The record gives the reactivity of an RNA of 177 nucleotides to DMS and 2A3. Conditions: 150 mM KOAc, 10 mM MgCl2 and 150 mM bicine (pH 8.5), 24 C. In probing experiments dimethyl sulfate is read out at A N1 and C N3, which are open when not base-paired. Values cover nucleotides 27 to 126.
RNA sequence: GGGAACGACUCGAGUAGAGUCGAAAAUAACAGGAGAGUAGAUGAAUCGCGUUAAGUGUGUGUGAAUGGGAUGUCGUCACACAACGAAGCGAGAGCGCGGUGAAUCAUUGCAUCCGCUCCAAAACAACAUGUUUCACUGAUUCGUCAGUGAAACAUGAAAAGAAACAACAACAACAAC
Reactivity to DMS in 0.01 (KOAc 150mM, MgCl2 10mM, bicine 150mM(pH8.5), 24C), signal-to-noise 5, nucleotides 027 to 126: u010a090a140c180a120g000g010a020g000a070g010u000a180g010a030u000g020a110a040u000c010g000c000g010u000u000a080a080g030u020g020u000g000u010g010u010g000a060a040u010g010g020g010a060u000g010u010c170g010u010c000a010c000a000c010a010a010c060g010a130a140g030c250g010a140g000a050g010c010g000c020g000g020u000g000a080a100u010c020a040u000u010g000c020a020u000c000c000g000c010u000c000c020a050a040a060a080c200a070a140
Reactivity to 2A3 in 0.01 (KOAc 150mM, MgCl2 10mM, bicine 150mM(pH8.5), 24C), signal-to-noise 5, nucleotides 027 to 126: u070a010a020c020a020g010g010a030g010a010g040u140a020g000a040u020g020a040a030u010c010g010c010g040u030u090a160a040g050u120g000u010g000u010g020u010g200a070a040u050g040g000g050a030u040g080u140c070g020u020c010a000c010a000c000a010a070c020g060a140a020g090c110g050a080g020a010g060c010g000c020g000g020u010g030a040a100u110c020a040u000u070g000c000a000u010c010c010g000c000u000c000c010a030a070a030a050c070a020a000